[RMDB]
RNA sequence: GGGAACGACUCGAGUAGAGUCGAAAACGUAAGACGGGGAUAACGCGGAGUCAAACCAAAACGAGAUCGUGUGGAAGCCACCGUUUGAGGAUCGAAGCACUAAAUUGAAUCAAACUAGCUUAAGUUUAGCGUGUCUGUCCGCAUGCUUAAGUGAAAUUGUAACACAGUGGUUCGCCACUGUGUUACAAAAAGAAACAACAACAACAAC
Reactivity to 2A3 in 0.01 (KOAc 150mM, MgCl2 10mM, bicine 150mM(pH8.5), 24C), signal-to-noise 1, nucleotides 027 to 156: c080g010u030a000a090g070a000c040g000g000g000g040a030u080a230a050c070g000c010g130g020a040g190u300c050a070a020a090c070c000a140a020a020a040c080g030a000g000a060u250c070g010u050g010u100g010g100a050a000g000c000c000a000c000c000g000u000u010u030g000a000g000g000a000u040c020g000a000a040g000c060a000c080u200a100a050a120u300u170g000a010a000u070c000a020a000a040c020u000a000g010c000u000u000a000a000g010u010u050u160a030g000c000g000u100g050u170c080u100g140u040c000c000g010c000a000u140g030c000u080u050a020a000g000u000g050a000a020a010u050
Chemical mapping of a 207-nucleotide RNA with 2A3. Conditions: 150 mM KOAc, 10 mM MgCl2 and 150 mM bicine (pH 8.5), 24 C.